[RMDB]
RNA sequence: GGGAACGACUCGAGUAGAGUCGAAAAGAAACACAGGCAAGCAGGACUAUUGCCACCCUCGGCAGUUUUCAUUAAGCUGGGGACUCUCGUUCUAGCUCAUCUACAGUUUCACACAUGGCAGGGUAAAGAGAAUAAUACAGUUCGCUGUAUUAUUCUCAAAAGAAACAACAACAACAAC
Reactivity to 2A3 in 0.01 (KOAc 150mM, MgCl2 10mM, bicine 150mM(pH8.5), 24C), signal-to-noise 6, nucleotides 027 to 126: g010a020a050a000c030a010c030a030g010g040c020a010a040g010c020a040g010g040a020c020u040a050u060u060g040c030c030a050c020c000c000u030c000g010g000c010a050g020u050u090u150u200c050a060u110u190a060a020g000c000u010g000g000g010g030a050c000u020c000u020c060g020u030u000c020u050a060g010c010u020c020a070u020c030u050a050c010a060g010u010u030u050c050a040c010a000c010a070u100g050g000c020a010g090g010g040u100a040a060a030
Reactivity to DMS in 0.01 (KOAc 150mM, MgCl2 10mM, bicine 150mM(pH8.5), 24C), signal-to-noise 9, nucleotides 027 to 126: g010a080a070a060c070a110c130a080g010g000c080a090a070g010c050a060g010g010a080c060u000a060u000u000g010c020c040a180c170c020c030u010c060g010g010c020a040g000u000u000u010u010c150a080u010u010a090a120g010c030u000g000g010g010g010a060c060u000c040u000c060g010u000u000c010u010a060g010c030u000c050a050u000c040u010a080c110a100g010u000u000u000c040a070c090a080c080a060u000g000g010c030a040g000g000g010u010a050a080a120